[RMDB]
RNA sequence: GGGAACGACUCGAGUAGAGUCGAAAAGUCAUAUGCCGGCAAACGUCUGGUGAAGGAUUUUAGUGUCAAAGGACAGAUGGUUAGCUUACAGGAGGAAGGCGAGGAGUAUACGCCGCGUCAGGGACUACGAUAUCCUGCCUUUCGAGGCAGGAUAUCGAAAAGAAACAACAACAACAAC
Reactivity to DMS in 0.01 (KOAc 150mM, MgCl2 10mM, bicine 150mM(pH8.5), 24C), signal-to-noise 3, nucleotides 027 to 126: g010u000c030a060u020a040u030g040c020c030g000g000c070a070a100a160c180g010u020c020u010g070g020u010g020a090a120g020g000a010u000u000u020u020a080g040u010g000u010c030a060a080a060g030g020a120c060a000g000a030u000g020g010u000u010a120g010c080u010u000a090c100a060g020g000a120g000g010a100a020g010g000c050g010a010g020g010a060g020u010a040u040a020c130g000c050c070g000c040g040u000c000a120g000g020g000a110c060u020a140
Reactivity to 2A3 in 0.01 (KOAc 150mM, MgCl2 10mM, bicine 150mM(pH8.5), 24C), signal-to-noise 3, nucleotides 027 to 126: g040u000c040a030u090a000u290g020c020c000g010g000c030a090a150a110c150g040u090c030u070g010g000u040g070a110a040g050g020a040u050u000u030u160a150g020u120g020u050c040a040a110a090g090g000a010c010a020g070a020u040g130g000u040u030a030g040c030u100u120a080c000a040g010g010a000g060g000a100a010g020g000c010g030a030g060g000a030g000u110a080u010a060c060g000c000c000g040c000g020u000c020a030g000g000g060a030c070u070a010
Structure probing data (DMS and 2A3) for a 177-nucleotide construct. Conditions: 150 mM KOAc, 10 mM MgCl2 and 150 mM bicine (pH 8.5), 24 C. For 2A3, 1,337 sequencing reads were counted. Reactivities are given for positions 27 through 126.